[RMDB]
RNA sequence: GGGAACGACUCGAGUAGAGUCGAAAAUACAAGUACGAAAGUACAAGCCUUAUCAGUUGGGCCAUCUGGUCAAAUUAGCGCUCACCCAGGAGGUCCUUCGCAUGAGGUCGACAAGCGCUAAAAGAAACAGUAGUACCCGAUUCGUCGGGUACUACUGAAAAGAAACAACAACAACAAC
Reactivity to DMS in 0.01 (KOAc 150mM, MgCl2 10mM, bicine 150mM(pH8.5), 24C), signal-to-noise 2, nucleotides 027 to 126: u020a070c160a100a130g020u000a000c000g000a080a070a270g020u000a030c010a110a130g010c000c010u020u000a080u010c070a140g010u020u020g020g050g020c030c000a020u000c010u000g000g000u010c060a020a130a070u010u000a020g020c040g000c010u000c080a140c300c020c010a040g000g000a070g020g010u040c000c010u010u000c040g000c160a040u010g010a040g000g000u000c140g020a090c260a010a040g000c030g000c020u000a010a020a090a090g000a060a060a130